RNA sequence: GGGAACGACUCGAGUAGAGUCGAAAAAGCGCUGCUUGUAAAACAGCAACAAAAAUAACUGUAAACAACACAGAUUACGCUCCAGCUUACGCUAAAGCUGCGUGAGUUAAUCUCCUUUUGGAGCUGGACUGAUUAGAAUUUCUAGCGUUUUAAUCGCGUCAAUGUUCUGGUUCGCCAGAACAUUGACAAAAGAAACAACAACAACAAC
Reactivity to 2A3 in 0.01 (KOAc 150mM, MgCl2 10mM, bicine 150mM(pH8.5), 24C), signal-to-noise 2, nucleotides 027 to 156: a010g030c010g000c020u010g020c010u100u070g100u120a000a020a020a110c000a000g060c000a010a090c010a010a130a070a040a020u130a080a040c020u040g000u050a110a210a030c050a070a000c030a000c000a080g050a050u060u160a060c050g000c030u000c000c000a000g010c000u000u000a000c010g000c010u040a300a160a000g110c140u080g000c070g000u010g010a010g000u020u060a090a100u050c070u110c030c000u090u120u070u060g010g010a000g000c010u030g000g060a040c030u060g010a050u000u110a040g030a090a100u090u090u000c070u100a030g000c000g030u000u040u030u120a090a030u060c030g000c020
Conditions: 150 mM KOAc, 10 mM MgCl2 and 150 mM bicine (pH 8.5), 24 C. This 207-nucleotide RNA was probed chemically with 2A3. Reactivities are given for positions 27 through 156.